[RMDB]
RNA sequence: GGGAACGACUCGAGUAGAGUCGAAAAGGUGGACCUGUCGGACGCGGACAUCGAUAUCACCGUCGACCUCGGCGUCGGCGACGGGCAGGCGAGGAUCCGAACCACUGAUCUGUCGCAUGCCUACGUCGUCAACCGGGCAUUUCGAUGCCCGGUUGACAAAAGAAACAACAACAACAAC
Reactivity to DMS in 0.01 (KOAc 150mM, MgCl2 10mM, bicine 150mM(pH8.5), 24C), signal-to-noise 1, nucleotides 027 to 126: g060g000u000g000g000a110c050c010u000g000u000c000g010g010a090c070g000c040g000g000a090c100a040u000c080g000a090u000a050u010c100a120c210c050g010u000c070g020a070c190c150u010c040g010g000c070g000u000c100g070g000c040g000a000c000g000g000g010c000a010g000g010c020g010a300g000g030a010u000c000c160g000a050a170c220c180a020c120u010g000a000u000c000u000g000u010c020g030c030a010u000g000c000c020u000a100c070g020u000c030
Reactivity to 2A3 in 0.01 (KOAc 150mM, MgCl2 10mM, bicine 150mM(pH8.5), 24C), signal-to-noise 2, nucleotides 027 to 126: g140g010u070g000g030a090c020c000u030g060u050c000g000g050a040c040g000c010g150g000a000c020a070u030c060g010a010u020a000u150c080a040c100c000g000u020c000g000a070c020c020u130c140g140g000c040g080u020c090g010g030c010g010a030c010g000g000g010c040a000g020g020c030g010a010g000g040a010u000c010c080g040a110a140c100c040a190c080u050g000a040u000c010u020g300u190c020g000c000a010u030g000c000c000u080a140c030g050u060c000